[RMDB]
RNA sequence: GGGAACGACUCGAGUAGAGUCGAAAAACCGGCAAGGGAAGAAGUUUCCAGUCAUCUUGUGCCACUUCGGUGCGCAGAUGGGCGAGGUGUCCGGUCCCAUGAGUCAAAAGCCGGUAAGAACCUCUGGGUCGUUUCGCAUGUUCGCAUGCGAAACGACAAAAGAAACAACAACAACAAC
Reactivity to 2A3 in 0.01 (KOAc 150mM, MgCl2 10mM, bicine 150mM(pH8.5), 24C), signal-to-noise 1, nucleotides 027 to 126: a000c060c000g020g050c130a220a270g230g000g000a020a020g030a050a020g150u000u060u000c000c000a000g000u000c010a000u010c040u110u250g010u000g130c240c060a070c030u030u040c140g000g000u040g010c050g000c000a020g000a010u000g020g000g100c040g030a170g010g010u100g010u010c000c050g100g000u000c010c000c000a050u050g030a020g120u170c020a070a070a000a000g000c010c030g010g000u040a030a000g030a160a110c090c010u040c060u140g000g000
Chemical mapping of a 177-nucleotide RNA with 2A3. The reactions ran in a buffer of 150 mM KOAc, 10 mM MgCl2 and 150 mM bicine (pH 8.5), at 24 C. Values are in units of 0.01, from 0 to 300, in steps of 10. Reactivities are given for positions 27 through 126.